The record gives the reactivity of an RNA of 177 nucleotides to 2A3 and DMS. The 2A3 profile rests on 2,579 reads. 2A3 adducts were read by reverse transcription with SuperScript II with manganese.
RNA sequence: GGGAACGACUCGAGUAGAGUCGAAAACAGUGUGGGGAAGUUGGUGGAUGGGGAGAGGGCAGCAGAGUAACCAGCUUUUAGUGGAGACCUGGAUUUGAGUGCCCUGAGUUAGGUGAGCCUUUGUACCCGAUUUGACUUAUUUCGAUAAGUCAAAUCGAAAAGAAACAACAACAACAAC
Reactivity to 2A3 in 0.01 (KOAc 150mM, MgCl2 10mM, bicine 150mM(pH8.5), 24C), signal-to-noise 3, nucleotides 027 to 126: c040a030g060u060g000u080g160g020g020g020a090a150g150u150u100g090g100u110g050g050a240u140g030g010g020g030a090g020a000g010g010g000c010a030g020c010a000g040a020g020u030a070a040c010c000a020g080c050u090u080u070u190a170g040u180g110g020a060g020a020c030c000u030g010g040a070u080u060u120g060a080g070u030g000c020c000c000u030g040a090g040u080u130a020g000g030u050g060a010g000c010c020u010u030u090g060u040a070c020c010
Reactivity to DMS in 0.01 (KOAc 150mM, MgCl2 10mM, bicine 150mM(pH8.5), 24C), signal-to-noise 4, nucleotides 027 to 126: c080a140g010u010g010u010g010g000g010g000a110a090g010u010u010g010g020u010g000g000a150u020g020g000g000g000a140g010a060g010g010g010c010a080g010c030a030g000a080g010u010a090a090c030c010a040g010c090u010u000u000u020a120g020u000g010g010a070g020a040c130c020u000g000g010a150u000u000u000g000a080g000u000g010c020c000c010u000g000a060g000u000u000a070g000g010u000g000a110g000c070c050u000u000u000g010u000a150c080c050
Overview: DMS adducts were read by reverse transcription with MarathonRT.